Chemical mapping of a 177-nucleotide RNA with DMS and 2A3.
For DMS, 2,350 sequencing reads were counted.
The RNA was probed in 150 mM KOAc, 10 mM MgCl2 and 150 mM bicine (pH 8.5) at 24 C.
It was measured as part of the RMDB library OK1LIB.
RNA sequence: GGGAACGACUCGAGUAGAGUCGAAAAUGAAGGCCUAUGUCAGAAAAUGUGGACAAUGAUCUCUAUUUCUGUGAUCAUCCUCUCUUCAGCCGAAUCCAAAACAAGAGUAAUGAGCAUGGUUCAAGGACUACCCUGUUGGUUUCGACCAACAGGGUAGAAAAGAAACAACAACAACAAC
Reactivity to DMS in 0.01 (KOAc 150mM, MgCl2 10mM, bicine 150mM(pH8.5), 24C), signal-to-noise 2, nucleotides 027 to 126: u000g000a060a040g000g000c040c010u010a110u010g030u050c060a060g000a040a050a080a150u030g010u030g020g000a050c090a060a080u010g020a060u000c000u000c040u030a110u000u020u020c060u030g030u010g010a020u000c010a050u020c080c000u030c000u000c080u020u020c040a090g000c020c070g010a020a110u060c020c040a100a050a020a070c190a100a080g030a070g000u010a050a070u000g000a050g030c060a060u000g010g020u000u000c030a030a130g010g010a300
Reactivity to 2A3 in 0.01 (KOAc 150mM, MgCl2 10mM, bicine 150mM(pH8.5), 24C), signal-to-noise 4, nucleotides 027 to 126: u230g030a070a040g060g030c010c040u110a060u110g110u140c070a060g080a110a120a070a070u220g060u170g050g030a000c040a040a120u090g050a100u000c070u000c010u110a190u150u260u030c180u160g020u000g010a000u000c000a010u000c020c010u030c020u020c040u070u050c030a060g000c010c000g030a000a000u000c020c020a030a060a020a060c050a090a060g040a010g090u140a110a160u220g020a040g040c060a010u090g000g080u050u030c100a150a080g070g020a050